[RMDB]
RNA sequence: GGGAACGACUCGAGUAGAGUCGAAAAGGGGUCUGUGCUGCGAGGUAAAGCUUUUGACGAGCUGAAGCCUCCACGGCUCGAUAAGCUUUACUACCCACCGCACGCACAGACGGAGGCACCCAAAAGACAAUCUUAGCGUUCGCGCUAAGAUUGUCAAACUAUAGUUCUGUUUCGACAGAACUAUAGUAAAAGAAACAACAACAACAAC
Reactivity to 2A3 in 0.01 (KOAc 150mM, MgCl2 10mM, bicine 150mM(pH8.5), 24C), signal-to-noise 7, nucleotides 027 to 156: g110g000g030g000u010c000u000g000u000g000c000u000g000c000g000a010g010g000u010a010a000a000g000c030u080u190u280u300g180a130c080g000a000g000c000u010g020a090a010g010c000c000u000c000c010a010c000g000g000c000u000c000g030a110u080a300a060g000c000u010u000u000a000c000u040a050c030c090c040a050c010c000g000c000a020c130g000c000a000c000a000g000a000c010g000g000a000g000g000c000a020c000c000c000a040a120a010a030g000a000c000a000a000u000c000u000u000a000g000c010g070u030u050c270g010c010g000c130u000a000a000g000a000u000u000g000u000c000a000a010
Reactivity to DMS in 0.01 (KOAc 150mM, MgCl2 10mM, bicine 150mM(pH8.5), 24C), signal-to-noise 4, nucleotides 027 to 156: g000g030g020g040u000c000u010g020u000g010c000u000g020c020g000a140g020g040u000a010a040a030g020c000u000u000u000u010g020a210c120g000a030g040c000u000g020a070a100g020c010c010u000c000c000a300c020g010g010c000u000c010g010a110u000a040a060g020c000u000u000u000a020c010u010a020c030c010c030a300c060c000g000c010a030c110g000c030a070c010a030g010a020c030g000g010a030g050g030c030a110c020c020c030a080a060a100a190g000a020c000a010a000u000c010u000u000a000g010c000g030u000u020c300g020c030g030c000u000a000a000g020a010u000u000g000u000c010a000a060